[RMDB]
RNA sequence: GGGAACGACUCGAGUAGAGUCGAAAAGAUAUGGAGCCUGAACUACGCUGUAAACGAAGAACGCUAUCGGAAACGAUAGCGGGAGUGCAGCGCAGGCUCCUAAGUCAAAGCUUAGUUCGCUAAGCAAUCGAUAGUAACACUUCGGUGUUACUAUCGAAAAAGAAACAACAACAACAAC
Reactivity to 2A3 in 0.01 (KOAc 150mM, MgCl2 10mM, bicine 150mM(pH8.5), 24C), signal-to-noise 2, nucleotides 027 to 126: g030a010u060a030u170g010g020a020g020c060c000u020g030a090a070c100u140a040c300g010c000u020g060u130a180a220a140c120g100a250a070g030a080a010c010g000c010u000a000u000c000g020g000a060a040a070c000g000a010u000a010g000c000g000g000g000a000g020u080g000c010a010g000c010g000c000a010g000g010c000u010c000c000u010a010a000g000u000c000a090a070a010g000c000u000u010a000g010u090u110c250g000c150u020a000a000g000c000a020a090
Reactivity to DMS in 0.01 (KOAc 150mM, MgCl2 10mM, bicine 150mM(pH8.5), 24C), signal-to-noise 3, nucleotides 027 to 126: g000a050u000a300u020g000g000a020g010c010c000u000g000a090a100c210u040a300c000g040c010u000g020u010a070a100a110c100g000a090a140g000a220a160c040g000c000u010a010u000c000g000g000a060a080a180c000g000a010u010a000g000c010g030g000g000a060g010u000g000c010a010g000c040g000c020a010g000g000c000u000c000c000u000a000a070g000u010c040a070a100a150g000c010u000u000a000g040u000u010c230g010c000u020a000a000g000c020a140a090

Background: The record gives the reactivity of an RNA of 177 nucleotides to 2A3 and DMS. Reactivities are rounded to 0.1 and cut off at 0 and 3. The data come from the RNA Mapping Database (RMDB), library TTRDEL. Conditions: 150 mM KOAc, 10 mM MgCl2 and 150 mM bicine (pH 8.5), 24 C. Values cover nucleotides 27 to 126.